[RMDB]
RNA sequence: GGGAACGACUCGAGUAGAGUCGAAAAGUUUGAUCCUGGCUCAGGAUGAACGCUGGCGGCGUGCCUAAUACAUGCAAGUCGAGCGAAUGGAUUAAGAGCUUGCUCUUAUGAAGUUAGCGGCGGACGGGAGUCACUGGUUAUUCGUAACCAGUGACUCAAAAGAAACAACAACAACAAC
Reactivity to DMS in 0.01 (KOAc 150mM, MgCl2 10mM, bicine 150mM(pH8.5), 24C), signal-to-noise 3, nucleotides 027 to 126: g020u010u000u000g000a050u000c010c020u010g000g020c140u020c040a060g050g010a050u010g000a030a040c060g030c110u000g010g010c020g010g000c000g040u030g000c060c040u030a110a070u040a120c090a070u020g010c060a050a100g000u010c010g010a300g030c020g010a040a000u000g010g000a130u010u000a010a010g000a000g000c050u020u000g020c010u000c000u030u010a000u000g000a300a180g000u000u000a070g000c020g000g010c040g010g000a070c040g000g020
Reactivity to 2A3 in 0.01 (KOAc 150mM, MgCl2 10mM, bicine 150mM(pH8.5), 24C), signal-to-noise 4, nucleotides 027 to 126: g040u050u060u090g150a050u040c030c000u080g110g090c070u060c110a010g000g030a030u030g030a050a000c000g000c030u030g070g010c010g010g000c030g010u070g030c000c010u090a120a020u150a130c090a020u120g050c040a080a050g020u000c000g010a010g010c020g040a020a040u020g010g010a010u000u030a030a000g000a000g010c030u090u130g040c000u030c000u000u010a010u010g010a000a030g020u020u000a020g010c030g300g090c020g030g010a010c020g060g040

Structure probing data (DMS and 2A3) for a 177-nucleotide construct. 2A3 adducts were read by reverse transcription with SuperScript II with manganese. The reactions ran in a buffer of 150 mM KOAc, 10 mM MgCl2 and 150 mM bicine (pH 8.5), at 24 C. The data come from the RNA Mapping Database (RMDB), libraries RFM100 and RFMREP.